[RMDB]
RNA sequence: GGGAACGACUCGAGUAGAGUCGAAAAGAAAGAAGAAAGCAACGAAAACGUCGAAGAAACAGGAUCCACUGGAAGGAGUUGCGAAAGACGGAAGAAAAAGCUCGUAUCCGAGCUAAGGAUGCAGAAAGGGAUAAUGAAUGUUCGCAUUCAUUAUCCCAAAAGAAACAACAACAACAAC
Reactivity to DMS in 0.01 (KOAc 150mM, MgCl2 10mM, bicine 150mM(pH8.5), 24C), signal-to-noise 2, nucleotides 027 to 126: g000a050a120a160g000a150a070g010a070a090a130g000c040a030a110c020g010a090a040a050a070c040g010u000c030g030a180a040g000a090a120a130c060a030g030g010a080u030c000c030a110c090u000g000g010a050a050g000g000a080g000u020u000g000c000g010a050a040a050g000a020c050g000g000a060a110g000a040a040a170a100a020g000c000u040c010g000u010a140u000c090c040g000a010g040c040u070a060a080g000g000a090u010g000c050a030g000a030a080a010
Reactivity to 2A3 in 0.01 (KOAc 150mM, MgCl2 10mM, bicine 150mM(pH8.5), 24C), signal-to-noise 1, nucleotides 027 to 126: g170a000a020a010g130a050a000g080a090a090a000g030c000a010a030c120g080a020a040a080a040c010g120u070c030g040a100a130g050a040a080a000c010a020g000g090a050u010c000c000a090c050u150g050g000a030a030g070g040a040g030u050u070g040c000g030a000a040a000g010a010c010g040g000a000a060g130a030a130a000a020a100g040c030u020c010g020u030a080u000c050c030g000a000g080c000u000a000a000g050g020a090u120g020c040a030g120a130a300a020
Chemical mapping of a 177-nucleotide RNA with DMS and 2A3. The DMS profile rests on 2,419 reads. The 2A3 profile rests on 1,011 reads. For DMS the reverse transcriptase was MarathonRT. The RNA was probed in 150 mM KOAc, 10 mM MgCl2 and 150 mM bicine (pH 8.5) at 24 C.